[RMDB]
RNA sequence: GGGAACGACUCGAGUAGAGUCGAAAAGCGGGUUUUUUGCAGACUCCCGCCGUCGUGCUGUCCCGCCGUGGUGCCGUCUCGGUGACCCCGGUGCGCGCGAUAAGACGGUGUCCCGUCCAAGUUCUGCGCAGGUAAAGCUUUUCGAAGCUUUACCUGCAAAAGAAACAACAACAACAAC
Reactivity to 2A3 in 0.01 (KOAc 150mM, MgCl2 10mM, bicine 150mM(pH8.5), 24C), signal-to-noise 3, nucleotides 027 to 126: g010c020g000g020g040u000u020u010u030u220u280g050c010a000g000a020c000u010c010c000c010g020c010c020g020u030c010g000u030g080c030u060g060u070c010c010c000g020c000c010g000u010g000g020u020g000c030c010g200u220c150u210c270g030g020u050g270a110c000c000c010c000g000g000u010g010c060g030c020g000c010g010a020u020a060a050g010a000c020g000g040u070g070u090c000c000c010g000u060c020c050a140a040g040u090u000c010u000g010c000